[RMDB]
RNA sequence: GGGAACGACUCGAGUAGAGUCGAAAAGGCCCCGGUUUGUCACGAUGGCUUGGGUGACAGAAGCGCUCAUGUUCUACGGCAAGGCUUGGUUUACCGUUGAAGAACGCUAUGCCGAGGACGGCCGGCCCGCUAGGGCAGAUUUCGAUCUGCCCUAGCGAAAAGAAACAACAACAACAAC
Reactivity to DMS in 0.01 (KOAc 150mM, MgCl2 10mM, bicine 150mM(pH8.5), 24C), signal-to-noise 4, nucleotides 027 to 126: g010g000c030c010c030c040g020g020u000u010u000g010u000c010a040c050g000a140u000g010g010c040u000u000g020g000g030u000g000a090c070a090g020a090a100g010c040g000c040u010c050a100u020g010u010u000c010u010a170c030g020g000c030a050a230g010g000c060u010u010g000g000u010u010u000a050c200c020g010u000u010g000a110a090g000a030a020c030g020c110u010a090u010g000c000c000g010a060g000g010a090c130g000g000c020c020g000g000c030c030
Reactivity to 2A3 in 0.01 (KOAc 150mM, MgCl2 10mM, bicine 150mM(pH8.5), 24C), signal-to-noise 3, nucleotides 027 to 126: g080g010c020c000c000c030g000g050u020u060u210g010u010c030a020c090g080a160u160g030g010c030u060u060g040g020g000u010g030a030c030a060g160a110a020g070c040g000c020u030c050a060u130g070u220u020c030u060a070c000g000g000c030a070a120g090g020c040u130u120g080g040u070u040u100a070c040c010g010u010u060g070a070a060g020a070a000c010g000c020u020a050u090g010c020c000g010a020g010g020a030c000g020g000c010c010g050g000c000c000